The record gives the reactivity of an RNA of 207 nucleotides to 2A3 and DMS.
For DMS the reverse transcriptase was MarathonRT.
The reactions ran in a buffer of 150 mM KOAc, 10 mM MgCl2 and 150 mM bicine (pH 8.5), at 24 C.
RNA sequence: GGGAACGACUCGAGUAGAGUCGAAAAAUACGAUUCGUCGUAUCCGUGGAUAUGGAACCAGGUAGCCGCCAGCGAGGUUUCUCGGAAACGAGAAACUACCCACCGCUGGAACUACGGUGUACUGGUUCCUAAGUCGUGAUGAUAGGUUCGCCUAUAAUCUAUCGAUAAUGUUCGCAUUAUCGAUAGAAAAAGAAACAACAACAACAAC
Reactivity to 2A3 in 0.01 (KOAc 150mM, MgCl2 10mM, bicine 150mM(pH8.5), 24C), signal-to-noise 4, nucleotides 027 to 156: a010u040a010c010g010a000u030u090c200g050u010c010g010u140a080u080c070c060g160u180g180g000a010u000a010u040g000g000a000a000c000c000a010g010g070u130a010g000c000c020g000c010c010a010g000c000g010a000g000g010u010u010u000c000u000c000g000g000a000a010a000c000g000a000g000a000a000a000c000u040a060c040c040c000a040c010c000g010c000u000g000g020a010a010c040u200a040c020g000g020u050g060u290a030c000u000g000g000u000u000c000c000u000a000a000g000u000c000g020u120g070a120u140g040a020u030a030g050g050u050u080c210g100c100c000u070a050u070a090a080
Reactivity to DMS in 0.01 (KOAc 150mM, MgCl2 10mM, bicine 150mM(pH8.5), 24C), signal-to-noise 3, nucleotides 027 to 156: a060u010a020c030g000a060u000u000c300g000u000c010g090u000a000u010c020c030g040u040g020g010a050u000a030u000g020g010a020a020c020c010a020g000g000u010a300g000c010c020g010c030c020a070g000c010g000a180g020g020u000u000u000c010u010c010g000g000a070a060a090c010g000a000g010a010a020a020c000u020a020c030c040c000a300c010c000g000c000u000g010g000a040a050c080u000a300c010g010g000u010g010u000a290c020u000g000g000u000u000c000c000u000a010a060g000u000c010g030u000g020a120u000g010a110u000a010g020g030u000u000c140g010c030c000u000a060u000a090a160